[RMDB]
RNA sequence: GGGAACGACUCGAGUAGAGUCGAAAAAUUGCGGCAAUAACGGUUGACGCUAAACUAAACCAACUUAUGUCAUUCAUAACGAUUCUCCUUGGCUUUUAAGCUCAUGGGCUUGAAUGCCCCCAGCAAACAGCUGGUAAUAUUUCGAUAUUACCAGCUGAAAAGAAACAACAACAACAAC
Reactivity to DMS in 0.01 (KOAc 150mM, MgCl2 10mM, bicine 150mM(pH8.5), 24C), signal-to-noise 5, nucleotides 027 to 126: a150u010u000g010c050g020g010c030a030a040u010a130a160c290g030g010u000u000g000a060c090g010c040u000a050a080a100c140u000a060a080a100c030c010a100a120c150u000u000a040u000g000u010c130a070u010u000c040a040u000a030a050c080g010a120u010u000c060u000c020c100u000u010g020g010c020u000u000u000u000a010a040g010c000u010c100a090u000g020g010g010c030u000u000g000a030a010u000g000c030c010c030c030c050a080g010c130a060a050a180
Reactivity to 2A3 in 0.01 (KOAc 150mM, MgCl2 10mM, bicine 150mM(pH8.5), 24C), signal-to-noise 4, nucleotides 027 to 126: a020u090u060g000c010g020g000c020a030a060u110a250a070c160g180g010u010u010g020a000c020g020c040u060a100a040a050c060u040a050a000a080c010c020a010a050c030u130u090a070u120g070u040c030a070u080u050c030a040u060a110a050c050g100a120u070u000c030u000c010c030u040u050g010g010c000u070u050u010u090a050a020g000c000u010c070a090u150g060g040g000c000u010u040g030a030a020u030g020c000c000c000c020c000a000g000c000a090a050a050
Chemical mapping of a 177-nucleotide RNA with DMS and 2A3.
The 2A3 profile rests on 5,287 reads.
DMS adducts were read by reverse transcription with MarathonRT.
2A3 adducts were read by reverse transcription with SuperScript II with manganese.